Structure probing data (2A3 and DMS) for a 207-nucleotide construct.
The RNA was probed in 150 mM KOAc, 10 mM MgCl2 and 150 mM bicine (pH 8.5) at 24 C.
2A3 adducts were read by reverse transcription with SuperScript II with manganese.
DMS adducts were read by reverse transcription with MarathonRT.
RNA sequence: GGGAACGACUCGAGUAGAGUCGAAAAUCAAUCACCACCACGUGCGAUGCCAUGUUGGUGAUACCGCAGCUGAAGCCGGCUUCCAAACUCCUUCAAGAAUAUCCUUUAGCGGGAUAUCACUACGCGGCGCGGAUGGAGUGGCGGGGCAAAGGGUUGACAGGUAUUUAAUAUUCGUAUUAAAUACCUGAAAAGAAACAACAACAACAAC
Reactivity to 2A3 in 0.01 (KOAc 150mM, MgCl2 10mM, bicine 150mM(pH8.5), 24C), signal-to-noise 3, nucleotides 027 to 156: u070c010a000a040u050c010a020c040c000a010c010c010a040c050g020u030g040c050g180a230u200g060c130c020a020u050g000u060u030g090g000u000g000a010u040a020c030c040g040c080a040g020c030u060g030a080a030g070c060c030g090g010c040u160u100c040c040a090a110a070c000u020c020c030u100u160c040a020a070g060a110a050u080a030u040c010c020u110u150u170a070g040c130g020g010g010a000u010a010u040c050a040c050u140a050c030g050c050g100g050c060g020c020g030g070a030u060g030g030a060g010u040g000g020c050g010g020g000g000c000a070a060a040g040g020g000u020u040g020a020
Reactivity to DMS in 0.01 (KOAc 150mM, MgCl2 10mM, bicine 150mM(pH8.5), 24C), signal-to-noise 2, nucleotides 027 to 156: u020c060a140a130u000c030a080c030c000a050c040c030a050c050g000u020g020c060g000a110u000g040c050c010a010u010g030u000u010g030g040u010g010a060u010a010c030c050g040c070a170g030c030u000g000a030a080g020c030c040g010g000c070u000u010c010c010a120a160a090c030u000c020c000u000u000c030a110a120g010a100a070u000a020u010c000c000u000u000u000a200g000c140g050g050g020a020u000a010u000c030a070c050u000a090c030g020c040g030g020c060g050c110g010g000a090u000g010g000a100g040u010g000g020c060g020g010g020g040c050a030a070a120g020g010g000u000u000g000a220